About this RNA: The record gives the reactivity of an RNA of 177 nucleotides to DMS. It was measured as part of the RMDB library TTRDEL. The reactions ran in a buffer of 150 mM KOAc, 10 mM MgCl2 and 150 mM bicine (pH 8.5), at 24 C.
[RMDB]
RNA sequence: GGGAACGACUCGAGUAGAGUCGAAAAAAAAAGAUAUGGAACAUCAUAUCAGACGCAGCGGAGCCGAAGAACUCGGAAACGAGGGAGGCUCUUGUUGUAGACGGUAUGAGUGUUCCUAAGUCAAAAAGGGAAUAGUAAUGUUCGCAUUACUAUUCCCAAAAGAAACAACAACAACAAC
Reactivity to DMS in 0.01 (KOAc 150mM, MgCl2 10mM, bicine 150mM(pH8.5), 24C), signal-to-noise 1, nucleotides 027 to 126: a020a060a140a080a030g000a030u000a300u000g000g000a030a010c020a010u020c000a010u000a000u000c000a030g000a240c220g000c000a010g020c000g050g000a010g040c000c000g000a090a100g000a090a160c020u000c000g000g020a100a080a130c050g000a000g000g000g040a080g000g020c000u000c000u000u000g000u000u010g010u000a030g000a260c150g000g000u000a020u010g000a000g000u010g010u000u020c000c000u000a000a030g010u000c040a050a080a060a030a110

Source information: Values cover nucleotides 27 to 126.